[RMDB]
RNA sequence: GGGAACGACUCGAGUAGAGUCGAAAACCGCGUAAGCGGUGCUAGCCUUCCUUCUGGUAGCUUCGGCUCCAGCAAUCAUCAGGGGAUGCCUGUAAACCCGAAAUGAUUGUCAUAUAGAACAGGAUCGUCGCCUAGUACGUUGUGGACGAAGCGACUACCGAGUAUUCUACUUCGGUAGAAUACUCGGAAAAGAAACAACAACAACAAC
Reactivity to DMS in 0.01 (KOAc 150mM, MgCl2 10mM, bicine 150mM(pH8.5), 24C), signal-to-noise 2, nucleotides 027 to 156: c000c000g000c000g040u020a130a140g030c020g010g020u000g010c080u000a170g030c060c030u010u010c030c010u000u000c050u050g010g010u000a010g000c020u000u000c300g040g010c020u010c000c000a030g000c000a000a010u000c000a030u010c000a300g000g000g000g000a140u000g010c110c050u000g000u010a100a050a300c010c010c010g000a200a110a020u000g000a050u000u000g010u000c050a040u000a060u000a120g020a110a120c100a050g010g010a080u030c160g020u000c030g000c050c000u000a300g010u010a080c100g050u010u000g030u000g030g010a080c000g020a160a170g010c000g020a140c010u000a260